[RMDB]
RNA sequence: GGGAACGACUCGAGUAGAGUCGAAAAGUGCAGAGUGAAAUUCAUAGGUGCGGCGCCAAUGUGGCGUAACGACCCGGUACUCCACGCAGUCGAGCUGUAAACGUUCUGUGUUGGCGUUCGGGCCUCAAUGCUCCAUCCCAUUCGUGGGAUGGAGCAUAAAAGAAACAACAACAACAAC
Reactivity to DMS in 0.01 (KOAc 150mM, MgCl2 10mM, bicine 150mM(pH8.5), 24C), signal-to-noise 1, nucleotides 027 to 126: g040u030g000c080a080g060a120g030u000g000a000a050a060u010u050c050a070u000a100g000g000u000g000c090g050g030c110g000c020c040a040a040u030g000u020g060g000c000g040u000a050a010c160g000a020c030c000c000g000g000u060a050c010u040c010c000a070c000g000c080a080g020u000c000g000a300g000c190u000g000u020a050a040a110c020g000u050u010c000u000g000u020g000u000u000g000g000c080g000u000u000c060g000g000g000c090c000u090c220a070
Reactivity to 2A3 in 0.01 (KOAc 150mM, MgCl2 10mM, bicine 150mM(pH8.5), 24C), signal-to-noise 1, nucleotides 027 to 126: g090u100g000c020a000g080a030g130u100g050a100a060a240u090u190c000a010u080a130g130g000u100g000c000g000g000c020g000c000c000a040a140u170g030u090g120g000c000g000u000a150a040c060g020a020c000c000c000g000g000u050a000c000u000c000c000a000c000g000c000a000g000u030c000g000a000g100c150u030g140u300a150a150a000c060g000u160u000c000u000g070u000g000u070u060g040g000c030g000u040u020c010g000g000g000c000c000u020c010a000
This 177-nucleotide RNA was probed chemically with DMS and 2A3. Source: RMDB library OK1LIB, as collected in RNAgym. Values cover nucleotides 27 to 126. Values are in units of 0.01, from 0 to 300, in steps of 10.